[RMDB]
RNA sequence: GGGAACGACUCGAGUAGAGUCGAAAAAAGGACUAGGAGGAAUGUCGAAACCACCCUCAGGUACGUCACCUGUCUGUUGACCAGAAGGUGCUACACCCAUAAGCUCAAGAAUAACAGGAUCGAAGUUAAGGGCAGAGUGGUCAACCUCAGGGAUUUCCUCCCAAUUUACGUUCGCGUAAAUUGGGAGAAAAGAAACAACAACAACAAC
Reactivity to 2A3 in 0.01 (KOAc 150mM, MgCl2 10mM, bicine 150mM(pH8.5), 24C), signal-to-noise 2, nucleotides 027 to 156: a000a000g090g000a000c090u070a070g050g000a040g000g040a060a020u070g050u080c030g070a160a030a090c080c040a060c030c010c000u010c040a010g040g010u010a090c060g020u020c040a000c020c010u070g070u100c020u050g100u070u170g060a050c020c020a000g010a060a010g070g020u010g000c040u100a020c000a060c030c010c010a110u090a190a000g020c000u020c090a020a090g030a200a160u180a100a070c030a020g070g010a170u170c040g030a120a010g040u140u080a090a100g010g010g000c060a000g100a020g050u040g000g010u010c020a050a030c000c000u020c000a000g040g000g000a040u080u060u020c000